RNA sequence: GGGAACGACUCGAGUAGAGUCGAAAAGUUCUGGACAUGUCUUAGCUGAUGGCGCUCAUAAGCUGACUGAGGUUAACAAUGAAUGAAAAGCUGUUUUGUUGAUAUUCAAAAACUCAGGUCACCCCCCACAUUGGACCUUGUUCGCAAGGUCCAAUGUAAAAGAAACAACAACAACAAC
Reactivity to DMS in 0.01 (KOAc 150mM, MgCl2 10mM, bicine 150mM(pH8.5), 24C), signal-to-noise 1, nucleotides 027 to 126: g010u000u010c010u000g000g030a140c080a060u010g000u000c040u000u000a080g030c020u000g000a070u000g000g030c050g040c060u010c100a090u030a070a060g010c090u000g000a080c030u010g000a080g000g000u010u000a070a110c110a080a090u000g000a040a010u000g010a100a060a110a130g020c060u010g000u000u000u000u000g000u000u000g020a160u000a070u000u000c050a040a000a100a070a000c050u000c030a050g010g000u010c030a180c020c030c040c000c020c030
The data come from the RNA Mapping Database (RMDB), library OK2TST. The record gives the reactivity of an RNA of 177 nucleotides to DMS. For DMS, 1,001 sequencing reads were counted. In probing experiments dimethyl sulfate is read out at A N1 and C N3, which are open when not base-paired. Conditions: 150 mM KOAc, 10 mM MgCl2 and 150 mM bicine (pH 8.5), 24 C.